Source: RMDB library RNAMAK, as collected in RNAgym. Chemical mapping of a 207-nucleotide RNA with 2A3 and DMS.
RNA sequence: GGGAACGACUCGAGUAGAGUCGAAAAGUAGCCUUAUUCGUAAGGCUACGGAUAUCCUAAGUCAGCCGUCGACGAAGUAAGCGGGAGUCGGAAACGACGAAGAACGCUUACAGAGACGAGCUGAUAUGGAACAAAAACUGGAAUUCGUUCCAGUUAAUACUGUUUGCAAAUUCGUUUGCAAACAGUAAAAAGAAACAACAACAACAAC
Reactivity to 2A3 in 0.01 (KOAc 150mM, MgCl2 10mM, bicine 150mM(pH8.5), 24C), signal-to-noise 2, nucleotides 027 to 156: g000u000a000g000c000c010u030u030a030u080u070c230g040u070a010a000g000g000c000u000a000c000g000g000a070u080a040u040c000c020u080a090a040g040u000c000a000g000c030c020g000u030c010g000a300c080g030a200a020g000u000a000a000g000c010g030g010g030a010g010u000c010g000g020a040a070a210c000g010a000c000g000a060a000g000a050a000c000g000c000u000u000a010c000a020g040a000g000a010c000g000a010g010c000u000g000a000u000a020u020g010g000a030a060c050a040a140a000a000a000c010u020g000g020a050a010u100u020c160g090u210u000c000c000a000g000u000u010a030a010
Reactivity to DMS in 0.01 (KOAc 150mM, MgCl2 10mM, bicine 150mM(pH8.5), 24C), signal-to-noise 1, nucleotides 027 to 156: g030u000a000g030c020c000u010u010a030u000u010c300g030u010a000a010g000g000c000u000a000c010g000g000a170u000a060u020c080c030u000a100a230g040u000c010a020g000c000c010g000u020c000g020a300c100g000a200a300g000u010a010a010g070c000g010g000g020a110g040u010c000g010g000a150a090a300c000g020a020c000g010a070a120g000a170a100c020g030c000u000u000a000c010a110g000a230g030a020c020g000a100g050c000u000g000a000u010a040u000g030g000a090a180c140a070a030a010a030a000c000u000g030g020a030a070u000u010c300g010u000u020c020c000a030g010u000u000a050a200
Notes: Reactivities are rounded to 0.1 and cut off at 0 and 3.